Conditions: 150 mM KOAc, 10 mM MgCl2 and 150 mM bicine (pH 8.5), 24 C. This 177-nucleotide RNA was probed chemically with DMS and 2A3. The data come from the RNA Mapping Database (RMDB), library M2PK90.
RNA sequence: GGGAACGACUCGAGUAGAGUCGAAAAUACUAGCAUUCGGUUCCAACCCUGGAUGGAUACUCAAAGGUUGGCUGAGUUCCUUCCUCGGGCCUUGGUUCCGAUGCUCCAUCCAAGGCCGGAAACCAAAGUGCUUUUAGCAAUUCGUUGCUAAAAGCACAAAAGAAACAACAACAACAAC
Reactivity to DMS in 0.01 (KOAc 150mM, MgCl2 10mM, bicine 150mM(pH8.5), 24C), signal-to-noise 1, nucleotides 027 to 126: u010a130c210u000a000g010c020a010u000u000c020g000g010u000u000c020c000a040a200c000c040c010u010g020g020a040u000g000g020a070u010a010c020u010c020a020a150a170g010g030u010u000g020g030c170u010g010a000g010u000u010c010c010u000u000c010c010u000c200g000g020g010c270c160u000u020g000g020u000u000c030c010g020a020u000g000c030u000c050c040a040u020c050c000a040a190g000g010c120c080g000g020a050a130a180c040c070a040a070a100
Reactivity to 2A3 in 0.01 (KOAc 150mM, MgCl2 10mM, bicine 150mM(pH8.5), 24C), signal-to-noise 1, nucleotides 027 to 126: u180a020c080u040a010g000c010a030u070u170c040g000g000u010u020c000c020a010a000c020c000c000u020g010g010a020u040g010g000a050u100a200c000u010c010a090a140a070g240g010u210u070g120g070c060u000g000a010g000u000u010c000c000u010u010c010c020u040c050g000g000g000c010c040u030u010g000g000u000u040c000c000g000a010u010g010c000u000c010c000a030u010c000c000a030a030g080g000c010c020g060g020a060a010a040c030c010a010a090a130